[RMDB]
RNA sequence: GGGAACGACUCGAGUAGAGUCGAAAAGUGCCGGUCUGGGGACAGACAGUGCUAUACUAGAGCAGAGGAAAUCCAGACAGGUCGUUUCCAUCUGCCUGGGGCCUGUCUCUACAACUCUGCCACACUCACAAAUAUCGGCAUUCGUGCCGAUAUUUGUAAAAGAAACAACAACAACAAC
Reactivity to DMS in 0.01 (KOAc 150mM, MgCl2 10mM, bicine 150mM(pH8.5), 24C), signal-to-noise 2, nucleotides 027 to 126: g020u000g010c000c060g020g000u000c000u000g020g040g080g000a210c060a010g020a050c040a300g000u000g000c010u020a050u020a130c040u000a030g000a090g000c000a030g000a000g000g000a050a110a040u030c140c190a060g000a050c020a000g000g020u000c030g060u030u010u040c000c010a170u040c040u020g010c050c040u000g030g000g000g000c000c020u000g000u000c020u000c080u010a110c240a070a090c020u000c020u000g000c010c060a050c170a120c100u000c070
Reactivity to 2A3 in 0.01 (KOAc 150mM, MgCl2 10mM, bicine 150mM(pH8.5), 24C), signal-to-noise 5, nucleotides 027 to 126: g030u020g000c020c020g120g000u000c020u020g000g000g060g070a090c010a010g020a000c010a010g030u050g040c030u070a070u030a220c070u070a040g040a060g030c010a000g010a010g010g070a090a040a040u040c030c000a010g010a040c010a010g010g000u010c030g040u030u120u040c010c010a080u050c070u170g040c020c020u020g000g010g000g020c020c000u000g000u000c010u010c000u070a040c040a080a050c000u000c000u010g010c000c000a010c000a010c010u100c000
The record gives the reactivity of an RNA of 177 nucleotides to DMS and 2A3. Conditions: 150 mM KOAc, 10 mM MgCl2 and 150 mM bicine (pH 8.5), 24 C. 2A3 adducts were read by reverse transcription with SuperScript II with manganese. Source: RMDB library RFM100, as collected in RNAgym. For DMS the reverse transcriptase was MarathonRT.